RNA sequence: GGGAACGACUCGAGUAGAGUCGAAAACAGGCGGAGUCUCAUAACAAGCAGUUGAUCGUCACCGAUGGUCACGAUACGCCGGAACGAGAGCAGAAAGCCGUACAAAUGUUGGCCGACAGACAGUGCGUAAUCACUGGCUAUUCGUAGCCAGUGAUUAAAAAGAAACAACAACAACAAC
Reactivity to 2A3 in 0.01 (KOAc 150mM, MgCl2 10mM, bicine 150mM(pH8.5), 24C), signal-to-noise 5, nucleotides 027 to 126: c040a010g020g010c020g020g040a040g040u020c010u000c020a150u130a130a050c070a090a000g050c060a030g040u080u070g050a020u020c020g020u010c030a040c120c080g060a130u160g020g030u030c020a000c000g020a020u060a100c040g010c000c000g000g000a020a000c050g020a020g020a010g070c050a020g150a110a080a010g060c050c010g020u060a030c070a040a110a040u200g000u090u050g010g010c010c010g050a020c000a020g070a020c010a020g050u080g080c010g020
Reactivity to DMS in 0.01 (KOAc 150mM, MgCl2 10mM, bicine 150mM(pH8.5), 24C), signal-to-noise 7, nucleotides 027 to 126: c070a080g010g010c010g000g000a100g000u000c020u010c040a090u020a100a130c180a140a100g000c110a130g020u010u010g000a060u000c020g010u000c090a090c120c070g020a110u020g000g020u010c080a030c050g010a060u010a060c070g020c030c030g000g010a070a060c140g000a070g010a040g030c050a080g010a110a130a150g000c030c030g000u010a060c150a040a060a100u030g000u010u010g010g020c050c030g020a070c100a080g000a070c080a100g010u020g010c030g000
This 177-nucleotide RNA was probed chemically with 2A3 and DMS.
The reactions ran in a buffer of 150 mM KOAc, 10 mM MgCl2 and 150 mM bicine (pH 8.5), at 24 C.
The 2A3 profile rests on 3,979 reads.